[RMDB]
RNA sequence: GGGAACGACUCGAGUAGAGUCGAAAAGCGACGACAAGCGGCAUUUUGCUCUUGGCUGUCUGCGCGGUGUCGAAGACGGCGGCAGGGUAUCUGACGAUGUACACGCAGAAAUAUCAGGAGAACAUCACCAUGCGAUGAUGUUCGCAUCAUCGCAUGGAAAAGAAACAACAACAACAAC
Reactivity to DMS in 0.01 (KOAc 150mM, MgCl2 10mM, bicine 150mM(pH8.5), 24C), signal-to-noise 2, nucleotides 027 to 126: g040c080g030a070c090g010a030c060a010a090g010c150g010g010c020a140u010u010u000u030g010c010u000c010u000u000g010g010c060u000g020u000c000u000g050c030g020c040g020g020u000g000u010c040g000a100a050g000a060c050g020g000c000g010g020c120a030g020g000g020u000a090u000c030u010g000a070c040g010a060u000g020u000a100c110a120c050g010c010a080g000a050a090a060u000a060u000c090a090g000g010a080g020a060a070c110a060u010c080a040
Reactivity to 2A3 in 0.01 (KOAc 150mM, MgCl2 10mM, bicine 150mM(pH8.5), 24C), signal-to-noise 1, nucleotides 027 to 126: g060c010g140a140c040g020a030c010a000a080g020c020g010g000c030a010u150u070u150u300g020c010u000c030u020u070g080g050c010u040g030u070c060u050g010c040g000c000g000g170u160g000u110c000g050a090a070g090a010c060g010g000c040g000g060c100a060g040g000g000u030a020u080c020u050g020a040c060g040a060u000g020u020a030c060a000c050g000c010a010g100a010a110a010u170a080u080c050a010g090g000a050g030a070a050c020a030u050c000a000